[RMDB]
RNA sequence: GGGAACGACUCGAGUAGAGUCGAAAAUAUCAAUGGCUCUGCCUGUUUUUGUAGCUGUUAAACCAUUCUUCUGUCUUAAAUGCUACACAACUGGCACAAAAUAACUCUUUAGUAUGCAUGAUAACAGAGUAUGACCUUUAAUUUAUCAGAGUAAGUAAUUACGGCGUAAUUUCGAUUACGCCGUAAUAAAAGAAACAACAACAACAAC
Reactivity to DMS in 0.01 (KOAc 150mM, MgCl2 10mM, bicine 150mM(pH8.5), 24C), signal-to-noise 2, nucleotides 027 to 156: u020a090u010c060a080a130u020g010g020c050u000c070u010g000c010c010u010g010u000u000u000u000u000g010u000a090g050c010u000g000u000u000a060a090a080c070c040a160u000u020c080u010u000c070u000g000u000c010u000u000a050a070a070u000g010c000u000a060c000a060c250a030a050c040u000g010g000c060a090c050a100a060a110a240u000a050a050c030u000c050u000u000u000a140g040u000a060u000g020c060a030u000g020a070u000a040a070c010a120g060a090g020u000a040u020g020a130c040c000u000u000u020a060a120u010u000u000a090u000c040a080g000a070g020u020a040a140g000u000a090
Reactivity to 2A3 in 0.01 (KOAc 150mM, MgCl2 10mM, bicine 150mM(pH8.5), 24C), signal-to-noise 2, nucleotides 027 to 156: u170a030u140c070a040a100u080g020g040c040u000c000u050g000c000c000u000g100u000u040u000u020u040g020u000a030g000c010u000g030u170u050a110a120a030c030c000a070u130u080c040u130u070c080u090g070u000c020u020u040a050a020a020u130g000c000u010a000c020a000c000a050a000c000u010g010g000c050a000c030a010a030a010a010u080a060a030c010u020c000u050u080u020a060g020u020a080u120g050c060a060u030g050a020u070a050a020c050a030g010a000g000u060a060u170g090a030c010c000u030u090u090a060a120u070u150u060a060u100c030a010g030a010g140u110a080a000g070u190a050
Source information: Structure probing data (DMS and 2A3) for a 207-nucleotide construct. 2A3 adducts were read by reverse transcription with SuperScript II with manganese. Source: RMDB library OK3TST, as collected in RNAgym. For 2A3, 1,033 sequencing reads were counted.